[RMDB]
Overview
The record gives the reactivity of an RNA of 207 nucleotides to 2A3. High 2A3 reactivity points to a flexible backbone, as in loops and unpaired stretches.
RNA sequence: GGGAACGACUCGAGUAGAGUCGAAAACUCAGCAUGAAACAUCUGUCUACUUAUUUCUUUGCUGAGCCUGAAUGGAAUAUUCCAUCUCUGAAAAAUAAACUUUGUGUUUAAAUUGAAAUCUUUAUUCCUAUCUGGCAAAUUGGCUAUAUAUCCUCAACUACCCCACUACUUUCGAGUAGUGGGGUAGAAAAGAAACAACAACAACAAC
Reactivity to 2A3 in 0.01 (KOAc 150mM, MgCl2 10mM, bicine 150mM(pH8.5), 24C), signal-to-noise 1, nucleotides 027 to 156: c000u030c030a000g000c000a000u020g010a000a070a000c040a060u140c050u250g110u080c060u190a110c110u200u090a120u080u080u030c050u060u060u020g000c000u010g000a000g010c010c000u020g000a030a030u010g000g010a100a050u040a050u090u130c010c000a090u000c030u000c010u100g060a010a080a000a000a250u090a020a070a000c010u180u180u140g070u040g000u130u060u090a090a120a140u080u040g030a010a030a070u010c000u020u270u070a110u110u060c000c060u050a030u110c010u050g010g030c010a050a080a190u120u110g080g000c000u000a030u000a000u030a010u190c000c050u090c000a000a060